[RMDB]
RNA sequence: GGGAACGACUCGAGUAGAGUCGAAAAGGCCAGCCUGUAGUCCUCAGAGCCCCUGUGACUGGCUGGGUCUCAAGUGCAGGAAUGACAGGACACCGUCACACAGCCACUGUCGCGGCGGUGGUGGUUCAGGCAGAACCUCUGCAGACUCAGGCGGCCAGCUUUUAAAUGGGUUCGCCCAUUUAAAAGCAAAAGAAACAACAACAACAAC
Reactivity to 2A3 in 0.01 (KOAc 150mM, MgCl2 10mM, bicine 150mM(pH8.5), 24C), signal-to-noise 2, nucleotides 027 to 156: g010g010c000c010a020g000c030c010u050g180u300a000g010u060c010c010u000c030a010g000a060g030c000c020c000c010u010g030u020g040a110c040u000g010g030c030u040g020g000g040u000c020u030c040a150a090g020u100g050c030a020g020g080a170a150u070g040a070c060a060g060g020a050c000a050c060c020g060u110c010a040c010a010c010a050g080c130c020a110c100u070g010u010c070g000c040g040g020c010g020g000u070g030g050u050g000g000u060u090c000a030g100g090c090a080g020a020a010c010c000u000c010u000g070c080a000g000a000c000u000c020a000g010g000c010g040g000c000c000a000
Chemical mapping of a 207-nucleotide RNA with 2A3. For 2A3, 1,068 sequencing reads were counted. The data come from the RNA Mapping Database (RMDB), library OK3TST.